[RMDB]
Chemical mapping of a 177-nucleotide RNA with 2A3 and DMS. For DMS the reverse transcriptase was MarathonRT. The RNA was probed in 150 mM KOAc, 10 mM MgCl2 and 150 mM bicine (pH 8.5) at 24 C.

RNA sequence: GGGAACGACUCGAGUAGAGUCGAAAAGCUAGGAUGCAGACCGAAGAUGCCUGGGAUAGACCGAUGCUGUCUAACUCUCCUUACUGCCCUGUAUUACCGUUGGGGAAUAUGUAGAGCAUUUGGAUCCAUUUCAUAAGAGGUUCGCCUCUUAUGAAAUAAAAGAAACAACAACAACAAC
Reactivity to 2A3 in 0.01 (KOAc 150mM, MgCl2 10mM, bicine 150mM(pH8.5), 24C), signal-to-noise 8, nucleotides 027 to 126: g020c030u050a030g020g070a070u090g040c030a020g040a070c010c040g020a040a020g050a070u080g020c010c030u050g030g000g030a060u060a060g140a030c010c030g040a050u110g020c070u040g020u040c010u010a050a050c010u020c010u020c040c010u040u070a070c040u050g010c010c000c020u060g030u050a110u040u130a100c060c090g070u100u170g070g030g010g040a020a040u090a040u130g090u080a020g010a010g070c010a030u030u040u120g030g000a020u020c040c010
Reactivity to DMS in 0.01 (KOAc 150mM, MgCl2 10mM, bicine 150mM(pH8.5), 24C), signal-to-noise 9, nucleotides 027 to 126: g010c060u000a070g000g010a080u000g010c050a050g000a110c050c050g010a100a090g010a090u000g010c040c030u000g010g010g010a110u000a050g010a070c030c040g010a080u000g010c080u000g010u000c030u000a080a100c080u000c040u000c010c020u000u000a050c130u000g010c020c010c010u000g010u000a040u000u010a080c070c060g000u010u010g010g000g000g010a040a030u000a030u010g010u010a040g010a070g010c030a060u000u000u000g010g000a110u010c080c090